[RMDB]
RNA sequence: GGGAACGACUCGAGUAGAGUCGAAAAAGGCAGCUUCCCGGCUUUUAAGCAACGGACGAUGCAAACGUAGCAGGCAUCGAAUUUUCGGCCCUUCGAAAAGCUGAGAUGAGCUCAGCAAGGGAAUCAAGCAAUUGAUAUAGUUCGCUAUAUCAAUUGCAAAAGAAACAACAACAACAAC
Reactivity to DMS in 0.01 (KOAc 150mM, MgCl2 10mM, bicine 150mM(pH8.5), 24C), signal-to-noise 6, nucleotides 027 to 126: a080g000g000c040a050g020c110u000u000c010c000c020g010g010c030u000u010u000u000a060a110g010c060a090a090c090g000g010a160c040g020a020u000g000c020a050a070a150c140g010u010a080g020c100a100g000g010c010a010u000c010g020a090a080u000u000u000u000c020g000g010c010c000c010u000u000c110g000a080a040a070a110g010c000u000g000a030g000a300u010g010a130g010c010u000c000a000g010c010a040a040g000g000g000a060a070u020c190a090a140
Reactivity to 2A3 in 0.01 (KOAc 150mM, MgCl2 10mM, bicine 150mM(pH8.5), 24C), signal-to-noise 4, nucleotides 027 to 126: a000g040g000c020a000g010c020u020u010c000c010c000g000g020c000u060u090u040u160a090a030g020c040a060a040c040g030g060a020c000g020a010u020g000c020a110a130a100c090g080u090a070g080c090a040g140g000c000a010u000c020g050a100a120u080u050u020u060c020g040g010c000c000c000u050u040c030g060a090a070a040a030g000c010u010g000a020g010a110u200g100a060g110c000u000c000a010g000c010a020a020g030g000g010a020a040u160c050a080a030